[RMDB]
The record gives the reactivity of an RNA of 177 nucleotides to DMS and 2A3.
For DMS, 1,623 sequencing reads were counted.
Source: RMDB library RFMREP, as collected in RNAgym.
Reactivities are rounded to 0.1 and cut off at 0 and 3.
For 2A3 the reverse transcriptase was SuperScript II with manganese.
Conditions: 150 mM KOAc, 10 mM MgCl2 and 150 mM bicine (pH 8.5), 24 C.
RNA sequence: GGGAACGACUCGAGUAGAGUCGAAAACAGCGGAGGGGCGACUGCGGUAACAACGUCGUCUUGAGCGUCCGUGCGGAGGGUCAAGCAGGCUGUGCUAUUGAGCUCCGAAAUCACCACUCUCGCGUGCGACUAUCUCUUCGUUCGCGAAGAGAUAGUCAAAAGAAACAACAACAACAAC
Reactivity to DMS in 0.01 (KOAc 150mM, MgCl2 10mM, bicine 150mM(pH8.5), 24C), signal-to-noise 3, nucleotides 027 to 126: c060a130g010c000g020g010a110g000g000g040g030c000g000a010c030u020g000c300g010g000u000a030a050c030a060a300c130g000u000c000g010u000c020u000u010g020a300g030c020g000u000c050c050g010u010g010c020g030g030a030g000g010g000u000c000a150a060g010c040a110g010g010c100u010g030u020g010c010u000a090u000u000g020a170g000c010u000c030c010g000a060a090a080u010c040a060c050c060a080c050u000c000u000c010g000c090g020u000g010c210
Reactivity to 2A3 in 0.01 (KOAc 150mM, MgCl2 10mM, bicine 150mM(pH8.5), 24C), signal-to-noise 2, nucleotides 027 to 126: c020a020g020c000g020g040a020g000g000g010g000c000g010a020c030u010g000c000g080g000u140a110a070c050a000a010c040g010u020c000g030u000c000u000u030g000a040g070c050g110u000c000c020g080u140g080c010g010g050a060g010g050g090u020c030a040a010g010c030a020g250g000c050u200g080u040g230c010u030a130u130u200g090a050g000c020u000c010c030g040a060a060a040u080c050a030c050c010a020c020u040c000u060c030g030c000g060u050g060c040